[RMDB]
RNA sequence: GGGAACGACUCGAGUAGAGUCGAAAAAGACAGUCUUGGAUACCUAAAAUACCAACCAGACAUGGUUGAUGCAUCUGACCAUCAAAACUAUAUGGCCUAUGUGACCUACCUAAUGGCAAUCUUCUACCCAACAUUCACAGAAGCACAGAAAUUUGAGCCGUUAUAUGUCUUUCGAGACAUAUAACGGAAAAGAAACAACAACAACAAC
Reactivity to 2A3 in 0.01 (KOAc 150mM, MgCl2 10mM, bicine 150mM(pH8.5), 24C), signal-to-noise 8, nucleotides 027 to 156: a010g060a030c040a020g010u060c050u070u140g050g010a060u130a160c010c030u080a070a050a060a010u160a080c010c020a020a010c010c010a020g060a130c050a140u050g020g010u020u020g020a060u080g030c010a050u020c040u090g040a110c050c010a020u070c050a020a070a050a080c060u080a060u050a050u260g020g000c000c010u040a080u100g050u060g040a070c010c010u040a030c010c020u090a120a050u070g040g000c020a020a060u020c010u050u010c020u050a050c000c020c000a020a040c010a090u060u140c040a030c010a080g070a100a020g030c050a030c020a080g160a080a120a070u180u120u130g050a070g050
Reactivity to DMS in 0.01 (KOAc 150mM, MgCl2 10mM, bicine 150mM(pH8.5), 24C), signal-to-noise 3, nucleotides 027 to 156: a110g020a130c040a070g030u000c010u000u000g020g000a130u000a090c060c040u000a070a060a070a090u000a070c020c010a030a040c020c010a050g000a230c230a150u000g020g010u000u000g010a040u000g000c040a070u000c060u010g020a060c050c030a050u000c070a070a030a100a140c110u020a090u000a070u000g010g020c000c020u010a050u000g020u010g000a100c060c010u010a040c070c020u000a080a100u000g010g000c020a050a090u000c020u000u010c040u010a110c020c010c010a070a060c060a060u010u000c060a070c050a100g000a050a100g000c040a080c060a110g000a070a040a130u000u000u000g010a170g020

Source information
Structure probing data (2A3 and DMS) for a 207-nucleotide construct. The DMS profile rests on 4,790 reads. It was measured as part of the RMDB library OK3TST. Values cover nucleotides 27 to 156.